[RMDB]
RNA sequence: GGGAACGACUCGAGUAGAGUCGAAAAGCACGUCAACUACUGUCGCAUCCACAGGGUGCAACAUAUGAGCGGCUCGCGGCGACUAUAGUUAUGGGUGACGCGCUAUCAUACGCCAAACCGCAAUACGUCACCCAAGGGAGUUCGCUCCCUUGGGUGAAAAAGAAACAACAACAACAAC
Reactivity to 2A3 in 0.01 (KOAc 150mM, MgCl2 10mM, bicine 150mM(pH8.5), 24C), signal-to-noise 1, nucleotides 027 to 126: g050c050a020c090g060u030c050a060a050c040u100a050c050u050g030u030c040g000c010a030u010c020c010a280c040a300g000g000g000u010g020c010a070a020c010a030u170a120u240g100a020g020c000g030g000c020u070c080g050c040g000g010c020g030a080c000u100a040u190a110g060u300u090a140u290g110g020g000u050g000a000c000g000c030g000c010u070a080u110c060a050u050a090c060g060c030c020a040a130a070c020c000g030c110a070a120u140a080c060g030
Reactivity to DMS in 0.01 (KOAc 150mM, MgCl2 10mM, bicine 150mM(pH8.5), 24C), signal-to-noise 1, nucleotides 027 to 126: g010c020a010c020g000u000c000a120a070c080u000a120c210u000g010u000c050g010c020a010u000c030c030a190c250a120g000g020g030u000g000c000a040a030c020a060u030a050u010g020a170g060c020g000g010c090u000c170g060c100g000g000c000g010a090c030u000a040u000a110g000u030u000a240u040g000g010g000u000g000a060c000g050c030g000c030u000a010u000c070a080u030a120c010g000c000c010a020a100a030c060c020g010c080a110a130u000a060c150g000